[RMDB]
RNA sequence: GGGAACGACUCGAGUAGAGUCGAAAACGGACUAGCAUUCUGCGUAUCUUGUCGCUUCUAAGCGCAGAGUGCGAAACCUAAAGGAAUGCGACUGAGCAUGGAGUCUCUUUUCUGACACCAAUUUCGGACGCGGGUUCGACUCCCGCCGCCUCCACCACUUACUCUCUAGGUUCGCCUAGAGAGUAAGAAAAGAAACAACAACAACAAC
Reactivity to 2A3 in 0.01 (KOAc 150mM, MgCl2 10mM, bicine 150mM(pH8.5), 24C), signal-to-noise 5, nucleotides 027 to 156: c030g020g020a030c050u040a020g000c000a000u000u010c000u010g010c010g020u070a160u130c130u050u170g070u080c070g030c100u130u080c080u180a140a060g010c000g000c010a000g000a010g000u010g000c010g010a000a000a000c010c000u050a100a060a010g080g010a070a050u100g010c030g020a020c040u050g040a040g100c080a090u120g060g050a040g010u010c020u020c000u090u090u070u020c070u080g030a030c010a040c070c010a070a150u100u160u160c070g030g010a020c020g000c000g010g010g020u030u050c030g030a030c030u010c020c000c000g000c000c000g010c000c030u030c010c010a050c020c000a050
Reactivity to DMS in 0.01 (KOAc 150mM, MgCl2 10mM, bicine 150mM(pH8.5), 24C), signal-to-noise 2, nucleotides 027 to 156: c060g000g020a140c080u010a280g000c010a010u000u000c000u000g000c000g020u010a080u000c010u000u050g020u010c030g010c000u000u020c040u000a060a220g000c030g030c000a030g000a020g060u000g030c010g010a050a100a070c100c010u010a110a130a130g000g010a040a030u010g010c030g010a100c040u010g020a140g040c080a180u000g010g010a140g030u010c010u000c030u000u000u000u000c070u000g000a110c040a100c040c030a070a180u000u000u000c010g010g020a050c060g040c050g010g020g000u000u010c040g000a300c110u010c010c000c010g010c000c030g010c010c010u000c030c040a100c060c050a230